[RMDB]
RNA sequence: GGGAACGACUCGAGUAGAGUCGAAAAUGGCGGUGUAAUUCAGGCUGCAGUCCAGUAGAUGGUGCCGAAGAGUAAGAUACAGCAGAUUUAUUUAGGCUCUGUUCACUUUCAUCGAGCCACCAGAGAACCUGAUUAAGUCUUUCGAGACUUAAUCAGGAAAAGAAACAACAACAACAAC
Reactivity to DMS in 0.01 (KOAc 150mM, MgCl2 10mM, bicine 150mM(pH8.5), 24C), signal-to-noise 3, nucleotides 027 to 126: u000g030g020c050g000g010u020g010u020a040a090u010u020c100a060g000g010c030u000g010c040a110g020u000c070c030a100g010u010a090g010a140u000g000g010u010g020c040c020g020a060a070g010a070g000u000a040a040g000a130u000a040c070a050g000c120a020g000a100u000u000u000a120u030u010u010a080g010g000c030u000c010u000g000u000u000c090a090c100u010u020u010c110a100u010c050g000a280g010c080c020a030c100c040a070g010a150g010a090a140
Reactivity to 2A3 in 0.01 (KOAc 150mM, MgCl2 10mM, bicine 150mM(pH8.5), 24C), signal-to-noise 2, nucleotides 027 to 126: u070g060g020c010g010g020u070g050u070a090a120u140u120c060a040g090g000c000u010g000c010a000g030u050c010c010a000g020u020a030g040a090u060g050g000u030g000c000c010g000a060a000g050a000g050u050a070a030g010a050u110a110c020a020g040c030a000g050a140u030u200u090a190u100u130u060a240g090g000c040u010c000u010g050u090u040c060a060c100u090u090u050c030a060u030c020g000a010g060c020c000a010c010c000a020g020a010g010a160a030